Structure probing data (2A3 and DMS) for a 207-nucleotide construct. The RNA was probed in 150 mM KOAc, 10 mM MgCl2 and 150 mM bicine (pH 8.5) at 24 C. The DMS profile rests on 2,158 reads. It was measured as part of the RMDB library OK3TST.
RNA sequence: GGGAACGACUCGAGUAGAGUCGAAAACUCGCGAACCCAUCGAGGCGUGGGGAGCGACAUGAAUCAGCCUCGAUUAGAUGUGGUCGACCGUACUGCGGCGUACAGCGACCUAGUUAGAAGCCGCAAAACCGGAAGAGAUGACGCUCGACGGACGUCAAAUAGUCCUACUGUUCGCAGUAGGACUAUUAAAAGAAACAACAACAACAAC
Reactivity to 2A3 in 0.01 (KOAc 150mM, MgCl2 10mM, bicine 150mM(pH8.5), 24C), signal-to-noise 2, nucleotides 027 to 156: c010u000c000g020c010g070a120a070c000c000c000a020u070c070g010a010g060g020c020g010u010g020g000g000g020a030g000c010g070a010c050a150u200g080a140a080u160c060a060g010c000c010u020c010g000a050u120u110a090g080a080u100g080u120g060g000u020c020g100a160c020c000g030u010a000c050u080g040c010g000g000c010g020u040a020c020a010g040c020g000a060c000c020u020a010g000u030u000a080g030a220a020g020c000c000g080c060a050a020a020a020c030c040g020g020a140a000g010a020g000a040u070g020a020c000g000c060u020c030g060a020c010g020g010a040c010g040u010c010a000
Reactivity to DMS in 0.01 (KOAc 150mM, MgCl2 10mM, bicine 150mM(pH8.5), 24C), signal-to-noise 1, nucleotides 027 to 156: c000u000c010g020c030g000a070a300c010c030c010a150u000c020g010a050g090g100c040g040u000g000g000g000g000a200g050c000g020a110c140a160u010g040a110a080u010c050a030g020c000c010u000c000g020a080u000u000a080g030a110u000g000u010g010g040u000c010g020a160c020c000g020u000a080c040u010g020c020g010g100c010g010u010a060c090a170g010c000g000a040c010c020u000a090g020u000u030a140g030a110a130g010c010c000g000c000a060a030a090a160c020c010g010g020a100a140g010a100g010a150u000g000a010c040g030c000u010c020g040a150c110g000g010a070c000g010u000c010a050